[RMDB]
Structure probing data (DMS and 2A3) for a 177-nucleotide construct. 2A3 adducts were read by reverse transcription with SuperScript II with manganese. The DMS profile rests on 4,486 reads. DMS (dimethyl sulfate) methylates the pairing face of unpaired adenines and cytosines.
RNA sequence: GGGAACGACUCGAGUAGAGUCGAAAAGAAAUCUACCAAAGUGAUGCCGCCUGUGAUGAAAAAUUGGUAUCGAUGUUAGAUUAUGCAAUAUAUUCAUGCGAUGUGGUUUAUUACGUCGGGUGUGGAGAGAGGAAGUAUGUUUCGACAUACUUCCUCUAAAAGAAACAACAACAACAAC
Reactivity to DMS in 0.01 (KOAc 150mM, MgCl2 10mM, bicine 150mM(pH8.5), 24C), signal-to-noise 4, nucleotides 027 to 126: g000a090a070a050u010c010u010a030c040c020a040a140a160g030u010g010a020u000g010c010c010g020c170c110u010g010u000g020a080u000g010a030a070a090a100a080u000u010g020g020u000a010u000c010g010a190u000g010u000u000a040g000a030u000u000a080u010g010c090a060a050u010a070u010a150u000u010c010a020u000g010c020g000a020u010g010u000g000g010u000u020u010a070u030u010a030c030g030u000c030g010g010g030u010g020u010g000g000a070g010
Reactivity to 2A3 in 0.01 (KOAc 150mM, MgCl2 10mM, bicine 150mM(pH8.5), 24C), signal-to-noise 3, nucleotides 027 to 126: g050a030a040a030u000c010u000a010c030c020a040a060a030g130u110g030a000u000g010c000c010g060c040c020u190g110u140g130a130u140g070a040a050a020a030a110u130u120g000g010u020a010u020c010g000a040u060g030u090u060a030g020a050u020u090a020u170g080c020a100a000u070a010u020a050u190u060c030a020u060g100c010g020a010u020g030u020g100g000u170u180u080a140u160u110a070c020g000u010c030g000g100g000u050g030u100g060g030a070g010
Reactivities are rounded to 0.1 and cut off at 0 and 3. DMS adducts were read by reverse transcription with MarathonRT.